[RMDB]
RNA sequence: GGGAACGACUCGAGUAGAGUCGAAAAUAAAGAAAGCGAUGAGCUCCCCGCUAUAGUAAAGACUUCACCAUCAUCAUCAUCACUAUCGCUAACGCCAUCGCGCUCUUCCUCCACUGCAGGGCUAGAAAUAGCACGAGGUAUUCGUACCUCGUGCUAUAAAAGAAACAACAACAACAAC
Reactivity to DMS in 0.01 (KOAc 150mM, MgCl2 10mM, bicine 150mM(pH8.5), 24C), signal-to-noise 1, nucleotides 027 to 126: u040a040a110a060g010a000a130a160g000c000g000a030u050g000a180g000c050u020c040c030c030c070g020c000u000a000u010a070g000u010a070a160a060g000a050c070u000u000c050a110c010c010a070u030c010a050u000c240a050u010c080a020u020c180a030c000u000a000u010c140g000c010u070a060a130c210g000c010c040a020u000c010g010c030g040c050u000c010u000u000c000c000u000c000c010a060c080u030g000c040a090g020g000g020c000u010a020g010a060a090
Reactivity to 2A3 in 0.01 (KOAc 150mM, MgCl2 10mM, bicine 150mM(pH8.5), 24C), signal-to-noise 3, nucleotides 027 to 126: u110a000a100a040g120a010a040a000g030c000g060a040u040g040a040g030c000u070c020c010c000c010g000c010u060a070u040a100g090u100a020a160a050g070a090c050u100u030c100a080c100c020a030u150c000a000u070c000a010u020c000a040u030c070a010c030u040a040u040c010g000c030u070a080a010c060g000c000c010a020u030c010g000c010g020c000u000c000u040u030c000c020u030c000c000a060c010u080g000c040a070g080g030g000c020u050a040g010a070a200
Annotation: This 177-nucleotide RNA was probed chemically with DMS and 2A3. It was measured as part of the RMDB library OK1LIB. The reactions ran in a buffer of 150 mM KOAc, 10 mM MgCl2 and 150 mM bicine (pH 8.5), at 24 C. 2A3 adducts were read by reverse transcription with SuperScript II with manganese. For DMS, 1,418 sequencing reads were counted.